[RMDB]
RNA sequence: GGGAACGACUCGAGUAGAGUCGAAAAAAUCCUGUUACACCUGGGAUUUAGGCACUUUCAAUCUGAAAAAAUACAUAUCCUUUCAGCACUCUGGACGGACUUGAGAACUGUCCUUACGUGACCUAAAUCCUAUUACGGGAUUCGUCCCGUAAUAGGAAAAAGAAACAACAACAACAAC
Reactivity to DMS in 0.01 (KOAc 150mM, MgCl2 10mM, bicine 150mM(pH8.5), 24C), signal-to-noise 7, nucleotides 027 to 126: a070a060u010c010c000u010g020u010u020a090c160a080c130c080u020g000g010g010a020u000u000u000a010g000g000c030a020c030u010u030u030c240a130a130u040c010u000g000a000a010a020a050a130a170u030a150c210a050u020a050u030c180c050u000u000u000c000a010g000c300a100c130u040c090u000g000g020a030c010g010g000a050c040u020u010g010a160g010a120a060c010u000g000u000c000c010u010u010a030c180g000u000g000a130c000c020u000a010a000a010
Reactivity to 2A3 in 0.01 (KOAc 150mM, MgCl2 10mM, bicine 150mM(pH8.5), 24C), signal-to-noise 9, nucleotides 027 to 126: a010a000u080c050c000u080g050u120u080a070c080a050c030c040u050g050g010g000a010u010u010u050a030g020g010c010a010c020u100u190u150c110a130a160u030c020u060g010a020a000a010a010a030a010u210a040c110a060u140a080u150c000c020u000u010u020c010a010g010c030a040c090u080c060u030g000g010a010c010g010g020a020c030u140u220g100a070g020a140a040c020u010g000u020c000c000u010u050a050c070g020u020g170a200c000c010u020a010a010a010